[RMDB]
RNA sequence: GGGAACGACUCGAGUAGAGUCGAAAACGCAUGCGAGAGCAUGCGGCUAAGCUUCGGCUUAGUAAGAGCAACUUUGGAUUUUAGGCUCCCCGGCGUGUCUCGAACCAUGCCGGGCCAAACCCAUAGGGCUGGCGGUCCCUGUGCGGUCCAAAUUCAAAUGAGGACUAAAUUUCGAUUUAGUCCUCAUAAAAGAAACAACAACAACAAC
Reactivity to DMS in 0.01 (KOAc 150mM, MgCl2 10mM, bicine 150mM(pH8.5), 24C), signal-to-noise 1, nucleotides 027 to 156: c010g050c000a000u010g020c000g000a300g010a300g000c020a000u000g000c010g010g030c000u000a020a040g020c000u010u010c280g070g010c010u000u010a000g020u010a040a150g010a180g020c060a110a110c090u000u000u000g000g010a060u000u010u010u000a140g010g000c080u010c060c010c010c000g010g000c000g060u000g000u000c080u000c250g030a170a190c120c020a060u000g040c000c000g010g000g000c050c050a060a070a100c010c020c000a020u000a030g010g000g020c010u000g040g020c030g040g020u000c010c000c010u000g020u000g000c020g000g000u040c010c030a020a040a060u010u000c020a050a120
Reactivity to 2A3 in 0.01 (KOAc 150mM, MgCl2 10mM, bicine 150mM(pH8.5), 24C), signal-to-noise 2, nucleotides 027 to 156: c000g020c010a000u000g000c000g040a050g000a010g070c000a000u000g000c020g000g010c000u000a000a000g000c000u010u130c270g120g000c000u000u020a000g000u000a080a030g000a010g020c000a010a090c030u050u060u040g000g010a030u000u000u050u210a110g050g000c000u040c000c000c010c030g000g040c000g020u010g030u010c070u050c300g080a060a030c030c010a010u020g000c000c010g000g000g000c010c010a010a030a010c000c000c000a010u050a010g000g000g000c030u030g100g090c060g010g050u120c010c000c010u000g000u000g040c110g000g000u010c030c000a030a040a010u070u110c010a070a030
An RNA of 207 nucleotides, treated with DMS and 2A3 and read out base by base. The DMS profile rests on 2,783 reads. The 2A3 profile rests on 1,449 reads. The reactions ran in a buffer of 150 mM KOAc, 10 mM MgCl2 and 150 mM bicine (pH 8.5), at 24 C. For DMS the reverse transcriptase was MarathonRT. It was measured as part of the RMDB library OK3TST.